[RMDB]
RNA sequence: GGGAACGACUCGAGUAGAGUCGAAAAGAAAGAAAGUUCUUAGGAAGAGCAGCAGAGUGACCGGCACGACGAAGCUGCAGCAAGCGGUGUAAUGGCGAAAGCCAUGACCAAGCUGCUAAAGCCGGGACGGACGAACACCGUCGACCCUAAGAACAAAGACUAAAUACGCUUUCGAGCGUAUUUAGUCAAAAGAAACAACAACAACAAC
Reactivity to 2A3 in 0.01 (KOAc 150mM, MgCl2 10mM, bicine 150mM(pH8.5), 24C), signal-to-noise 1, nucleotides 027 to 156: g090a020a100a000g060a040a110a020g030u000u000c000u010u000a060g000g060a190a030g120a040g020c000a000g000c000a000g020a000g020u000g020a030c020c010g000g040c030a010c040g300a070c000g020a070a000g010c000u020g000c000a000g010c000a080a010g000c040g000g000u050g050u220a060a030u000g000g000c000g030a070a020a000g000c000c000a010u000g000a000c010c020a020a030g000c000u010g000c000u020a050a000a000g010c010c000g040g050g000a000c010g010g000a000c070g100a150a030c120a010c070c010g000u000c010g080a080c010c010c010u000a000a000g000a000a000c000a010a010a010

This 207-nucleotide RNA was probed chemically with 2A3.
For 2A3, 815 sequencing reads were counted.
For 2A3 the reverse transcriptase was SuperScript II with manganese.
The reactions ran in a buffer of 150 mM KOAc, 10 mM MgCl2 and 150 mM bicine (pH 8.5), at 24 C.